[RMDB]
RNA sequence: GGGAACGACUCGAGUAGAGUCGAAAAUCUCUUAAUCCCUUUGCAGUGAACUAUUUUGCGUUCUUAGACUUGCUCUUUGUGUAUUUUCACUGAGACAAUAAGAGAAUAUUUCAUCAUUCCGAAGGUGUGCGGGUGAGUGAUUCGUCACUCACCCGCAAAAAGAAACAACAACAACAAC
Reactivity to 2A3 in 0.01 (KOAc 150mM, MgCl2 10mM, bicine 150mM(pH8.5), 24C), signal-to-noise 2, nucleotides 027 to 126: u010c010u020c000u090u110a060a170u100c000c030c000u000u090u000g070c020a050g000u010g080a080a070c020u090a280u090u110u120u110g130c120g010u010u000c000u000u000a050g000a060c000u010u040g060c030u010c000u010u030u090g030u000g050u030a260u170u270u000u060c000a030c000u020g000a040g050a060c000a000a030u000a010a080g000a000g000a000a000u030a030u060u090u160c070a060u000c000a030u070u120c040c040g130a060a000g130g000u150g070